An RNA of 207 nucleotides, treated with 2A3 and DMS and read out base by base. Conditions: 150 mM KOAc, 10 mM MgCl2 and 150 mM bicine (pH 8.5), 24 C. DMS adducts were read by reverse transcription with MarathonRT. Source: RMDB library RNAMAK, as collected in RNAgym. 2A3 adducts were read by reverse transcription with SuperScript II with manganese.
RNA sequence: GGGAACGACUCGAGUAGAGUCGAAAACCGUAGGAGCGUCUACCCACCUUGCUGACCACCCUAUGAAGUGGAAUUCGAAAGAGUUCCAUGGAGGGUGCAGCAAGAGGACGCUCCUAAACGGAAAAGCACGCAAAAUAGUUCGCUAUUUUGCGUGCAAGAACUAGUACAAGUUCGCUUGUACUAGUUCAAAAGAAACAACAACAACAAC
Reactivity to 2A3 in 0.01 (KOAc 150mM, MgCl2 10mM, bicine 150mM(pH8.5), 24C), signal-to-noise 2, nucleotides 027 to 156: c010c010g010u010a010g000g000a000g020c000g010u010c010u040a150c040c050c010a040c010c010u010u010g010c010u020g040a250c030c110a090c030c020c000u300a300u170g000a000a000g000u000g010g000a000a010u010u010c010g020a030a010a060g010a010g010u010u000c000c000a000u010g000g010a010g000g010g000u000g000c010a000g000c000a000a000g000a000g000g000a000c000g000c000u000c000c000u000a000a000a000c000g010g030a070a020a030a090g020c020a000c000g000c010a010a000a010a020u020a000g030u120u090c250g000c190u000a010u020u020u000u000g000c000g000u010g010c000a000a000
Reactivity to DMS in 0.01 (KOAc 150mM, MgCl2 10mM, bicine 150mM(pH8.5), 24C), signal-to-noise 2, nucleotides 027 to 156: c010c000g060u010a000g010g010a030g030c020g030u010c000u000a040c020c030c010a300c100c010u010u010g000c020u000g020a180c220c010a020c000c000c000u010a300u000g030a130a300g030u010g000g000a030a010u010u000c000g000a250a090a270g010a040g010u000u000c000c000a010u000g020g000a020g070g000g020u010g000c010a030g010c000a030a030g000a090g010g000a010c030g010c010u000c000c000u010a000a060a050c010g030g000a070a050a140a190g010c000a010c000g040c010a010a040a010a030u000a000g010u010u000c300g020c000u000a020u030u000u000u000g010c000g000u020g050c040a030a030